[RMDB]
RNA sequence: GGGAACGACUCGAGUAGAGUCGAAAAACGUGCGAAAGCACGUUGGACGUCGUAGGAUAUGUAGGGUAUUCCUACAUGAGGAUCACCCAUGUUGACAUGGAAGAAGGACAGAAGGACGAUGUCCAUACCGAGGACGUAGGUUCGCCUACGUCCUCGGAAAAGAAACAACAACAACAAC
Reactivity to 2A3 in 0.01 (KOAc 150mM, MgCl2 10mM, bicine 150mM(pH8.5), 24C), signal-to-noise 2, nucleotides 027 to 126: a000c020g020u000g000c020g090a190a030a000g000c010a000c000g000u000u020g010g020a000c000g010u050c010g000u010a000g050g120a060u000a020u180g020u070a030g040g050g090u190a240u240u290c000c000u000a000c000a010u000g050a040g030g080a080u030c020a080c030c010c000a000u050g070u080u300g210a170c020a020u010g030g000a020a040g050a010a060g220g040a030c050a010g070a050a050g120g020a000c040g020a000u010g000u000c000c000a010u050a030
Reactivity to DMS in 0.01 (KOAc 150mM, MgCl2 10mM, bicine 150mM(pH8.5), 24C), signal-to-noise 2, nucleotides 027 to 126: a000c000g050u000g000c000g000a090a060a210g010c010a000c000g020u000u000g000g030a060c010g010u000c000g010u000a020g000g030a130u030a030u000g010u000a010g000g030g000u010a090u000u000c000c000u000a000c010a040u000g000a110g010g000a120u000c050a090c080c000c000a010u000g020u000u010g020a070c060a010u000g000g010a130a120g000a130a090g010g030a140c100a040g020a120a130g010g010a020c000g000a030u000g000u010c000c000a090u010a070
This 177-nucleotide RNA was probed chemically with 2A3 and DMS. Values cover nucleotides 27 to 126.